[RMDB]
RNA sequence: GGGAACGACUCGAGUAGAGUCGAAAAAACGAGAUCGUCGCUUUCGUACUGAAGAACGCGACCCGAUUUGGGAUGCAAGAUGUGAUUUGGCGUGGCGCCUACUACACGCCCAACGGCGCGCGGACAAGACAGACUUACUCUUCGGAGUAAGUCUGUCAAAAGAAACAACAACAACAAC
Reactivity to DMS in 0.01 (KOAc 150mM, MgCl2 10mM, bicine 150mM(pH8.5), 24C), signal-to-noise 1, nucleotides 027 to 126: a080a150c080g000a050g000a080u020c010g010u000c090g000c010u000u000u000c060g000u000a170c080u040g020a090a160g000a020a120c080g010c000g000a050c050c020c000g000a060u000u040u000g000g030g030a180u040g080c170a060a000g000a150u000g000u030g010a090u000u010u000g000g030c000g010u000g000g010c090g000c000c000u000a050c090u020a070c050a010c090g000c010c000c000a040a060c020g020g010c150g040c000g000c060g010g000a020c230a100a140
Reactivity to 2A3 in 0.01 (KOAc 150mM, MgCl2 10mM, bicine 150mM(pH8.5), 24C), signal-to-noise 2, nucleotides 027 to 126: a010a010c190g000a120g000a120u080c020g020u010c000g020c000u000u100u050c040g070u060a120c030u140g110a120a110g020a020a020c000g000c000g020a120c000c010c000g070a120u130u090u160g040g000g000a030u060g000c070a100a110g070a120u030g070u040g110a100u070u090u090g040g010c000g040u070g030g120c100g000c020c010u010a030c010u020a010c040a020c020g000c020c000c000a010a030c000g060g030c000g000c010g000c000g040g080a040c040a030a030
Conditions: 150 mM KOAc, 10 mM MgCl2 and 150 mM bicine (pH 8.5), 24 C. An RNA of 177 nucleotides, treated with DMS and 2A3 and read out base by base. For 2A3, 1,100 sequencing reads were counted. For DMS the reverse transcriptase was MarathonRT.